[RMDB]
RNA sequence: GGGAACGACUCGAGUAGAGUCGAAAAUACGCCAAUUUCGAUUGGCGUAACACGCAAACCGGCCGAAACGCAUUUUAUGCGUACGGUGGCGAAAGCCUAAAAACGCACUGUCAUUCGUGACAGUGAAACGUAGUUUAGGGUUCGCCCUAAACUACGUAAAAGAAACAACAACAACAAC
Reactivity to 2A3 in 0.01 (KOAc 150mM, MgCl2 10mM, bicine 150mM(pH8.5), 24C), signal-to-noise 5, nucleotides 027 to 126: u040a000c000g000c000c000a020a000u040u060u110c240g160a030u010u010g000g000c010g010u000a010a020c020a000c030g080c040a090a100a100c020c010g050g030c020c050g110a230a150a010c000g000c000a020u060u090u140u300a040u150g000c000g000u000a030c020g020g000u010g030g010c000g050a090a020a020g010c010c020u130a120a090a030a000a010c100g010c030a000c000u000g000u000c010a020u050u050c220g050u030g010a000c000a000g000u000g020a040a020
Reactivity to DMS in 0.01 (KOAc 150mM, MgCl2 10mM, bicine 150mM(pH8.5), 24C), signal-to-noise 3, nucleotides 027 to 126: u000a000c010g020c000c000a000a020u000u000u000c190g020a030u010u010g010g000c010g000u000a000a030c150a100c100g010c110a010a070a150c040c010g010g000c030c030g000a070a090a030c000g000c010a010u000u010u000u010a030u000g000c010g000u000a040c000g000g010u000g010g000c000g000a070a070a090g020c000c010u000a010a040a020a080a070c250g000c010a000c000u000g000u000c010a020u000u020c180g010u000g000a010c000a000g000u000g000a010a050